[RMDB]
RNA sequence: GGGAACGACUCGAGUAGAGUCGAAAAGUCAUACCGAUGGAAUAUGCAGCUUCUGUUUGUCCUUUCGGUAUAGAAAUAAUACCGCCACGAAUAAUUUCCGAAGCAUACGCACCUACAUUUAAUGAUAAAGAUGUUGAGUUUUCGAACUCAACAUCUUAAAAGAAACAACAACAACAAC
Reactivity to DMS in 0.01 (KOAc 150mM, MgCl2 10mM, bicine 150mM(pH8.5), 24C), signal-to-noise 2, nucleotides 027 to 126: g000u000c040a030u010a030c020c010g020a030u000g000g000a030a030u020a050u010g000c010a040g020c250u000u020c050u010g020u010u000u000g020u000c020c000u000u020u000c000g020g010u000a020u000a110g020a040a040a080u000a070a080u000a090c030c040g000c070c020a040c100g020a080a080u000a080a100u000u010u010c030c010g000a080a080g000c080a070u000a050c100g010c030a050c040c030u000a030c100a060u010u000u000a060a070u010g010a100u010a080
Reactivity to 2A3 in 0.01 (KOAc 150mM, MgCl2 10mM, bicine 150mM(pH8.5), 24C), signal-to-noise 2, nucleotides 027 to 126: g050u000c010a020u000a030c020c010g000a020u000g000g070a060a080u150a070u270g020c010a010g080c160u220u110c030u280g060u070u090u090g010u000c000c000u060u220u060c000g000g000u010a000u000a030g030a010a070a000u100a000a040u020a070c000c070g130c050c010a050c050g070a070a070u120a140a050u090u050u000c030c000g060a020a040g000c030a030u060a110c060g000c030a020c040c000u060a050c050a060u200u270u140a150a110u120g100a070u100a180